[RMDB]
RNA sequence: GGGAACGACUCGAGUAGAGUCGAAAAGAUAUGGAUCAGACGCGAUGAAACCACAACAAUGUCGGAAACGACUAUGUGGUGGAGCGUCCUGAUCCUAAGUCAAAACGAACGUCUUCGGACGUUCGAAGCCAUAGACACUGUUCGCAGUGUCUAUGGCAAAAGAAACAACAACAACAAC
Reactivity to 2A3 in 0.01 (KOAc 150mM, MgCl2 10mM, bicine 150mM(pH8.5), 24C), signal-to-noise 3, nucleotides 027 to 126: g010a000u040a000u080g010g010a000u000c010a000g000a010c000g000c000g100a180u080g040a070a030a010c020c020a010c000a090a120c070a170a300u300g010u000c010g000g040a010a010a000c000g020a000c020u040a110u170g000u010g000g070u020g020g010a030g000c000g000u000c030c030u000g010a000u000c000c000u010a010a010g010u020c010a060a000a060a110c020g010a000a000c000g010u000c000u050u110c300g220g020a000c000g000u020u010c010g000a000a000
Reactivity to DMS in 0.01 (KOAc 150mM, MgCl2 10mM, bicine 150mM(pH8.5), 24C), signal-to-noise 2, nucleotides 027 to 126: g000a000u000a110u030g000g010a030u010c010a020g000a020c000g010c010g040a050u040g020a070a170a050c000c020a020c000a080a150c250a170a040u030g000u000c000g020g000a020a010a030c000g010a020c010u000a090u010g050u000g000g000u000g000g010a060g040c010g000u000c200c040u010g000a000u000c000c010u000a000a020g000u000c010a090a080a080a190c000g000a000a010c000g020u000c000u010u020c170g050g010a000c000g000u000u000c000g010a030a100
This 177-nucleotide RNA was probed chemically with 2A3 and DMS. It was measured as part of the RMDB library TTRDEL. High 2A3 reactivity points to a flexible backbone, as in loops and unpaired stretches. The 2A3 profile rests on 4,462 reads. The reactions ran in a buffer of 150 mM KOAc, 10 mM MgCl2 and 150 mM bicine (pH 8.5), at 24 C. DMS adducts were read by reverse transcription with MarathonRT.